[RMDB]
RNA sequence: GGGAACGACUCGAGUAGAGUCGAAAAGAUAUGGAACUGCAAGAGGCUGCACUAUUCGGAAACGAACGAAUGCAGCUACCCACCUUGAUAGUUCCUAAGUCAAAACGGGCGUGUUCGCACGCCCGAACUCAGUCACAAUGUUCGCAUUGUGACUGAGAAAAGAAACAACAACAACAAC
Reactivity to 2A3 in 0.01 (KOAc 150mM, MgCl2 10mM, bicine 150mM(pH8.5), 24C), signal-to-noise 2, nucleotides 027 to 126: g020a010u060a050u120g010g000a000a000c010u020g000c000a010a000g030a090g040g030c000u000g020c040a030c110u130a130u070u040c000g020g050a060a100a110c000g020a030a020c040g030a240a070u010g000c000a010g000c000u020a010c010c020c020a080c010c010u110u050g040a250u200a110g000u000u020c000c000u020a140a010g060u020c050a040a020a060a110c010g010g000g010c000g020u040g040u100u120c300g030c130a000c010g000c040c000c000g020a000a000
Reactivity to DMS in 0.01 (KOAc 150mM, MgCl2 10mM, bicine 150mM(pH8.5), 24C), signal-to-noise 2, nucleotides 027 to 126: g000a030u000a300u000g000g020a010a020c000u000g010c020a000a030g000a080g020g000c000u000g000c020a020c040u000a300u000u000c000g010g000a090a130a190c000g010a010a040c070g000a040a020u000g000c000a000g000c000u000a030c040c030c140a300c060c010u000u000g000a070u000a010g010u000u000c000c000u010a030a050g000u010c010a070a020a100a080c040g020g020g000c000g020u000g020u000u020c220g020c000a040c020g010c000c000c020g020a000a030